[RMDB]
RNA sequence: GGGAACGACUCGAGUAGAGUCGAAAACUCAGCCGCGCCGACCAUGAUGGUCAGAACGCCUGCGGAAAAGCCGGCGAAAUCGGCGAUGGUUUUCGGCAGGUUGUCGCCAACUACCAUCGGCGCGAUGCGCACGACCAGUGUUCGCACUGGUCGUGCGAAAAGAAACAACAACAACAAC
Reactivity to 2A3 in 0.01 (KOAc 150mM, MgCl2 10mM, bicine 150mM(pH8.5), 24C), signal-to-noise 1, nucleotides 027 to 126: c010u000c000a010g050c000c040g000c010g000c000c000g010a040c000c060a100u040g010a010u010g000g030u030c120a060g030a040a010c010g040c000c000u020g000c040g110g060a020a030a020a010g080c000c000g020g100c230g100a030a100a110u190c030g010g080c140g050a130u240g140g020u050u020u010u050c020g140g000c010a000g050g000u160u300g010u030c010g000c000c010a030a010c000u060a030c000c040a000u000c030g000g030c000g030c000g040a010u030g050